[RMDB]
RNA sequence: GGGAACGACUCGAGUAGAGUCGAAAAACACUGCGGCACUACGGUGCCGCAGUGAGCCAUCCCAGUGUUCAGACUACCUGUUCAGGAGGCUGGGACAUGUACAGUAGUCUGCACAUUGGUUAGGCAAACGGAUGGAUAAGUUCGCUUAUCCAUCCGUAAAAGAAACAACAACAACAAC
Reactivity to 2A3 in 0.01 (KOAc 150mM, MgCl2 10mM, bicine 150mM(pH8.5), 24C), signal-to-noise 2, nucleotides 027 to 126: a000c000a000c000u000g010c010g000g000c010a010c040u040a130c300g150g000u010g050c010c020g000c030a000g000u000g000a000g010c010c000a030u030c000c000c000a010g000u010g000u000u040c000a000g010a000c000u010a000c020c110u020g000u030u080c030a030g040g130a130g000g300c100u150g010g000g040a070c020a170u030g010u030a010c010a000g000u010a000g000u010c000u000g000c020a000c000a010u000u000g000g030u000u080a110g010g000c000a050a030